[RMDB]
RNA sequence: GGGAACGACUCGAGUAGAGUCGAAAACGAGAAACCCCCUCGCCGUAAGACUAAGGUUUCCACAGCUAUGCUAAUCAGCUGUGGGUUAGUCAGGACCUAACGCGUACCCAAACGGGGAAGUGGAUGGCGUGAAUAUAACCUUCGGGUUAUAUUCACGAAAAGAAACAACAACAACAAC
Reactivity to DMS in 0.01 (KOAc 150mM, MgCl2 10mM, bicine 150mM(pH8.5), 24C), signal-to-noise 3, nucleotides 027 to 126: c070g000a090g020a120a150a190c030c030c000c030c020u010c040g020c050c020g000u010a090a110g010a010c020u020a030a040g010g010u010u000u000c000c000a000c000a020g000c000u000a080u010g020c240u010a080a090u010c140a020g000c010u000g030u000g000g000g000u000u000a020g000u010c000a220g000g000a140c050c000u020a050a100c050g000c050g000u010a290c040c010c020a040a060a150c180g010g010g010g010a120a170g000u000g000g000a150u010g000g000
Reactivity to 2A3 in 0.01 (KOAc 150mM, MgCl2 10mM, bicine 150mM(pH8.5), 24C), signal-to-noise 2, nucleotides 027 to 126: c010g000a000g090a110a210a030c000c020c010c000c000u010c010g000c000c000g040u040a090a040g000a000c000u010a030a010g120g060u100u130u000c010c010a000c000a000g000c000u050a030u260g040c020u150a170a040u120c090a030g010c010u000g010u010g020g000g000u000u000a000g000u000c000a020g000g040a040c000c020u070a100a030c010g000c000g040u050a030c000c010c020a060a200a100c090g000g000g000g000a030a020g020u030g000g000a050u060g030g000

The record gives the reactivity of an RNA of 177 nucleotides to DMS and 2A3. 2A3 adducts were read by reverse transcription with SuperScript II with manganese. The 2A3 profile rests on 1,730 reads. Source: RMDB library RFMREP, as collected in RNAgym. The DMS profile rests on 2,484 reads.